[RMDB]
RNA sequence: GGGAACGACUCGAGUAGAGUCGAAAAGCGCGGAAGCGGCAGUGCGCAAGGCCGUUGAGGACGAGCGCGUGGCGCGCGAUCAAUGGCGUGCCAACCAGCGCAAGCUGGAUGAGGCGCGUGAAGCACACAGUCGGAUAGGCUUCGGCCUAUCCGACUGAAAAGAAACAACAACAACAAC
Reactivity to DMS in 0.01 (KOAc 150mM, MgCl2 10mM, bicine 150mM(pH8.5), 24C), signal-to-noise 2, nucleotides 027 to 126: g000c030g010c000g080g000a070a120g050c040g000g020c000a090g000u010g020c010g030c030a170a300g000g030c020c030g000u080u020g000a230g000g010a140c030g000a250g000c030g030c020g010u000g000g010c040g060c020g010c020g030a110u000c110a070a060u010g030g000c000g000u000g030c020c020a290a080c000c050a000g050c020g000c300a090a110g010c000u010g000g000a030u000g010a100g010g010c020g030c020g020u000g020a100a100g000c030a090c070a190
Conditions: 150 mM KOAc, 10 mM MgCl2 and 150 mM bicine (pH 8.5), 24 C. The record gives the reactivity of an RNA of 177 nucleotides to DMS. For DMS, 800 sequencing reads were counted. Source: RMDB library OK2TST, as collected in RNAgym. Reactivities are given for positions 27 through 126.